[RMDB]
RNA sequence: GGGAACGACUCGAGUAGAGUCGAAAAGAUAUGGAAGAAGUGCCAGCCUUCUGCGUCGAUGAAAAGUAGAAAUCGGAAACGAUUUCUACUUGGAGACGCUGAAGGCGGUAAUUCUUCUUCCUAAGUCCAUUUAGUGUCCGUUCGCGGACACUAAAUGAAAAGAAACAACAACAACAAC
Reactivity to DMS in 0.01 (KOAc 150mM, MgCl2 10mM, bicine 150mM(pH8.5), 24C), signal-to-noise 1, nucleotides 027 to 126: g010a090u010a300u010g000g000a000a000g010a020a000g040u000g000c010c010a250g010c000c000u000u000c000u000g000c000g020u000c000g000a120u000g000a090a100a040a010g000u010a010g010a000a020a010u000c010g040g000a110a150a220c030g010a020u010u000u000c000u000a000c000u010u000g000g000a080g010a020c010g020c000u000g010a010a000g000g020c000g010g000u000a010a060u010u010c000u000u000c000u010u000c010c000u020a090a150g000u000c050

An RNA of 177 nucleotides, treated with DMS and read out base by base. DMS adducts were read by reverse transcription with MarathonRT. Reactivities are given for positions 27 through 126. Source: RMDB library TTRINS, as collected in RNAgym. The RNA was probed in 150 mM KOAc, 10 mM MgCl2 and 150 mM bicine (pH 8.5) at 24 C.